RNA sequence: GGGAACGACUCGAGUAGAGUCGAAAACAAUUAAAUUACUACAGUAGUGAAAAAGCUGCACAUUCUAUGGAAAAUGGCUAUAGUAGUGCUGCAACAGUCAUUAGUGGUCUCAAAGGUCCAUUGAGUACGACGAGAGGUGGUUCGCCACCUCUCGUCGAAAAGAAACAACAACAACAAC
Reactivity to 2A3 in 0.01 (KOAc 150mM, MgCl2 10mM, bicine 150mM(pH8.5), 24C), signal-to-noise 1, nucleotides 027 to 126: c130a020a100u300u260a010a000a210u130u070a020c070u120a090c070a030g090u130a000g000u120g050a150a000a000a000a000g100c070u140g170c000a000c000a250u140u090c000u000a040u000g050g160a000a000a230a300u230g300g000c000u050a000u100a000g000u000a000g000u000g000c050u060g000c000a070a000c000a120g070u070c000a000u010u010a040g130u000g040g010u000c000u000c000a200a280a070g180g000u020c000c060a170u000u060g000a070g170u060a080